[RMDB]
About this RNA:
The record gives the reactivity of an RNA of 177 nucleotides to 2A3 and DMS.
RNA sequence: GGGAACGACUCGAGUAGAGUCGAAAAGCAGUGAGCUGAGAUUGCACCAUUGCACUACAGCCUGGGCCACGGAGUGAGGCUCCAUCUCAAAAAAAGAAAGUUCAAGAGGAUGCUUGCUAAGGACUGGUGUUAAGUCGUACUUCGGUACGACUUAACAAAAAGAAACAACAACAACAAC
Reactivity to 2A3 in 0.01 (KOAc 150mM, MgCl2 10mM, bicine 150mM(pH8.5), 24C), signal-to-noise 1, nucleotides 027 to 126: g010c010a000g070u030g040a010g010c000u000g030a030g000a150u100u150g000c000a030c130c020a090u020u130g070c070a030c050u120a060c020a000g020c000c000u030g000g000g000c030c010a010c050g020g000a050g020u110g030a040g040g000c010u000c010c030a130u070c040u040c000a100a100a020a010a020a000a030g150a070a190a010g040u030u050c050a040a010g010a020g140g010a010u020g000c010u000u040g000c030u050a020a030g060g000a030c040u000g070g030
Reactivity to DMS in 0.01 (KOAc 150mM, MgCl2 10mM, bicine 150mM(pH8.5), 24C), signal-to-noise 2, nucleotides 027 to 126: g000c050a050g000u000g010a090g030c020u000g000a130g010a080u010u010g000c020a150c080c090a070u010u000g010c000a140c050u000a080c050a120g000c020c020u000g000g010g000c040c050a070c090g010g000a060g000u010g000a120g000g020c000u000c030c060a070u000c000u000c030a000a010a050a050a050a040a080g020a070a080a050g000u010u000c090a020a090g010a100g010g000a070u020g010c050u000u000g020c020u000a130a090g000g000a060c050u010g000g020
The DMS profile rests on 1,795 reads.